Conditions: 150 mM KOAc, 10 mM MgCl2 and 150 mM bicine (pH 8.5), 24 C. Structure probing data (2A3 and DMS) for a 177-nucleotide construct. For DMS the reverse transcriptase was MarathonRT. Values are in units of 0.01, from 0 to 300, in steps of 10.
RNA sequence: GGGAACGACUCGAGUAGAGUCGAAAAAAAAGAUAUGGAACAACUACCCACCGUGGAGUGGGUGAUGACCAGUCGUCGGAAACGACGACUGCAAGCCCAUGACACGAGGUUGUUCCUAAGUCAAAAAUCAAUAACUCAUGUUCGCAUGAGUUAUUGAAAAAGAAACAACAACAACAAC
Reactivity to 2A3 in 0.01 (KOAc 150mM, MgCl2 10mM, bicine 150mM(pH8.5), 24C), signal-to-noise 2, nucleotides 027 to 126: a010a000a040a030g200a060u300a130u230g000g000a000a020c000a010a000c020u160a270c000c040c030a020c020c010g010u020g000g020a060g000u020g000g050g010u010g040a220u090g000a030c050c040a000g010u000c000g000u020c010g020g010a050a050a070c000g010a000c000g000a000c000u000g040c000a040a040g000c000c000c000a010u030g010a010c000a000c000g000a010g000g000u010u000g000u000u030c000c000u030a070a010g190u130c100a010a020a000a060a250
Reactivity to DMS in 0.01 (KOAc 150mM, MgCl2 10mM, bicine 150mM(pH8.5), 24C), signal-to-noise 4, nucleotides 027 to 126: a080a050a160a100g000a090u000a210u010g010g000a020a010c020a010a010c040u000a090c010c010c010a300c110c010g010u000g010g010a300g010u000g010g010g020u010g010a050u020g000a180c300c000a000g000u000c010g030u000c010g000g000a080a080a140c000g000a010c000g000a000c010u000g000c040a030a120g020c010c000c010a020u000g000a300c030a020c020g000a030g000g010u000u000g010u000u000c000c000u010a020a060g000u040c070a040a100a090a070a140